[RMDB]
RNA sequence: GGGAACGACUCGAGUAGAGUCGAAAAGAGCGCGUGGAGUUCCAGAGCACCCCCGAGGUCUGGGGGUACUUUUCCGUGGGUUCCAAGGGAGCAGUGCACGAGUUCGCAGACUCCCAGUUCGGCCACCUCAUUUGACAAAAUUCGUUUUGUCAAAUGAAAAAGAAACAACAACAACAAC
Reactivity to 2A3 in 0.01 (KOAc 150mM, MgCl2 10mM, bicine 150mM(pH8.5), 24C), signal-to-noise 5, nucleotides 027 to 126: g020a010g000c110g000c060g080u080g020g020a060g030u130u100c040c010a010g020a010g040c010a010c000c010c010c010c010g040a060g070g200u150c130u150g020g000g010g000g000u010a000c000u080u100u090u030c040c030g040u100g000g000g050u070u000c030c020a070a090g040g010g000a030g000c080a060g140u040g060c030a020c100g160a090g130u170u110c050g000c020a020g030a200c000u000c000c010c000a000g030u030u050c030g050g000c020c010a040c010c020
Reactivity to DMS in 0.01 (KOAc 150mM, MgCl2 10mM, bicine 150mM(pH8.5), 24C), signal-to-noise 7, nucleotides 027 to 126: g000a070g010c040g010c110g020u000g000g000a100g000u000u010c070c070a120g000a040g010c030a040c010c000c000c010c000g010a190g010g010u010c130u010g040g010g010g010g020u000a000c010u000u000u010u010c070c070g020u000g010g010g000u000u010c020c040a100a140g010g000g000a030g020c040a080g010u000g010c010a090c070g000a130g010u010u000c090g010c030a110g000a120c030u000c010c010c000a110g010u000u000c070g010g010c050c050a100c120c100
An RNA of 177 nucleotides, treated with 2A3 and DMS and read out base by base. Source: RMDB library OK2TRN, as collected in RNAgym. As a SHAPE reagent, 2A3 marks flexible, mostly unpaired nucleotides at the ribose 2'-OH. For 2A3 the reverse transcriptase was SuperScript II with manganese.